Source: RMDB library M2RFPK, as collected in RNAgym. This 207-nucleotide RNA was probed chemically with 2A3. The 2A3 profile rests on 701 reads. For 2A3 the reverse transcriptase was SuperScript II with manganese. Conditions: 150 mM KOAc, 10 mM MgCl2 and 150 mM bicine (pH 8.5), 24 C.
RNA sequence: GGGAACGACUCGAGUAGAGUCGAAAAACGAGUGAGUUACGACUCACUCGACUUUUAAUGCUACCCAAAGGUCGUGUCAAGUCGAUAAAACGCAGAGUCAAAAAGUCCGACGUUACGACGUCGGACAACGAGCGAGUUCUGUUCGCAGAACUCGCAACUACUUUCGCUACUUCGGUAGCGAAAGUAGAAAAGAAACAACAACAACAAC
Reactivity to 2A3 in 0.01 (KOAc 150mM, MgCl2 10mM, bicine 150mM(pH8.5), 24C), signal-to-noise 1, nucleotides 027 to 156: a000c020g000a000g010u010g010a000g000u010u080a130c260g020a000c070u000c000a000c000u000c000g000a000c010u110u110u000u140a120a070u060g040c030u010a060c030c060c000a030a010a050g070g010u000c030g000u010g100u190c080a060a030g030u060c020g030a040u060a070a090a000a000c040g010c110a020g020a010g140u060c040a070a020a010a120a070g000u000c010c000g030a000c000g010u010u080a060c260g000a030c010g130u000c000g030g000a000c000a000a000c000g050a030g050c000g000a000g000u000u000c000u000g050u020u060c190g000c070a000g000a000a000c000u000c000g000c000a000a000